[RMDB]
RNA sequence: GGGAACGACUCGAGUAGAGUCGAAAAGAUAUGGAACGCAGUUAAGACAUGGCUAUAAUUUUUGUCUAUAUCGGAAACGAUAUAGAUAGUUAAAUAGCCAACAGCUUAACGGGAGCGUUCCUAAGUCCGUUGGUAUAUAGUUCGCUAUAUACCAACGAAAAGAAACAACAACAACAAC
Reactivity to DMS in 0.01 (KOAc 150mM, MgCl2 10mM, bicine 150mM(pH8.5), 24C), signal-to-noise 7, nucleotides 027 to 126: g000a090u000a300u010g000g010a010a000c000g080c010a090g000u000u000a010a000g000a060c100a280u000g010g000c000u000a020u030a080a110u000u000u010u000u010g000u000c000u000a010u000a010u010c000g020g000a120a100a180c000g010a020u000a000u000a000g000a000u000a000g010u000u000a030a100a040u000a000g000c000c000a020a070c300a120g010c000u000u000a010a000c010g000g000g020a120g000c000g010u010u000c000c000u000a040a130g010u010c040
Reactivity to 2A3 in 0.01 (KOAc 150mM, MgCl2 10mM, bicine 150mM(pH8.5), 24C), signal-to-noise 5, nucleotides 027 to 126: g030a040u130a060u200g010g000a000a010c000g000c020a050g000u000u010a000a010g030a110c060a210u090g000g010c000u030a070u030a180a300u140u120u090u140u080g000u000c010u000a000u000a000u000c000g000g010a080a030a040c010g000a000u000a000u000a020g000a010u000a000g000u000u090a130a260a060u010a000g010c010c000a020a030c040a030g030c010u010u010a010a010c020g020g030g060a130g000c000g000u010u000c000c000u000a040a010g040u020c030

Structure probing data (DMS and 2A3) for a 177-nucleotide construct. Values are in units of 0.01, from 0 to 300, in steps of 10. The data come from the RNA Mapping Database (RMDB), library TTRDES. The DMS profile rests on 13,300 reads.